[RMDB]
RNA sequence: GGGAACGACUCGAGUAGAGUCGAAAACAACACGUCCUCGUCGUACAGAGUGGUAACAUGUGUCACCACAUAUGCAAGCUUGGGUACACGGGCUUGACCCAACCCCUUGGGCGGAUGGUGGCACAUGAAAAGAAGUAACACUUCGGUGUUACUUCAAGCAUAACUCACACUUCGGUGUGAGUUAUGCAAAAGAAACAACAACAACAAC
Reactivity to 2A3 in 0.01 (KOAc 150mM, MgCl2 10mM, bicine 150mM(pH8.5), 24C), signal-to-noise 3, nucleotides 027 to 156: c050a000a030c030a030c100g120u070c020c000u020c040g070u030c060g010u110a030c070a060g060a050g040u110g040g060u140a070a020c000a000u000g000u000g000u010c000a000c000c030a010c020a030u150a040u250g020c020a020a160g100c030u030u020g000g000g000u020a000c030a030c040g000g000g010c030u190u300g100a300c000c000c010a020a030c000c000c000c000u020u040g020g000g000c040g090g000a160u020g000g000u000g000g000c000a000c000a000u000g000a000a000a000a010g000a010a000g000u000a020a000c010a000c000u010u090c250g100g000u010g000u000u000a000c000u010u000c000a000a000
Reactivity to DMS in 0.01 (KOAc 150mM, MgCl2 10mM, bicine 150mM(pH8.5), 24C), signal-to-noise 1, nucleotides 027 to 156: c050a130a060c050a140c050g000u000c030c010u000c050g020u010c000g000u000a190c050a020g000a120g040u000g000g010u000a070a140c000a040u000g040u010g020u000c040a020c060c000a060c070a140u000a010u000g050c060a040a120g010c090u020u000g040g010g020u000a140c150a060c030g030g020g040c070u000u020g010a170c020c000c010a130a070c040c020c020c060u010u000g010g010g050c070g020g010a090u020g010g060u000g020g000c030a000c020a010u020g000a040a120a060a150g020a000a000g000u000a000a020c000a020c020u000u040c300g050g020u000g030u000u000a010c000u000u000c000a060a250
An RNA of 207 nucleotides, treated with 2A3 and DMS and read out base by base. The RNA was probed in 150 mM KOAc, 10 mM MgCl2 and 150 mM bicine (pH 8.5) at 24 C. For 2A3 the reverse transcriptase was SuperScript II with manganese. The DMS profile rests on 1,936 reads. The data come from the RNA Mapping Database (RMDB), library M2RFPK.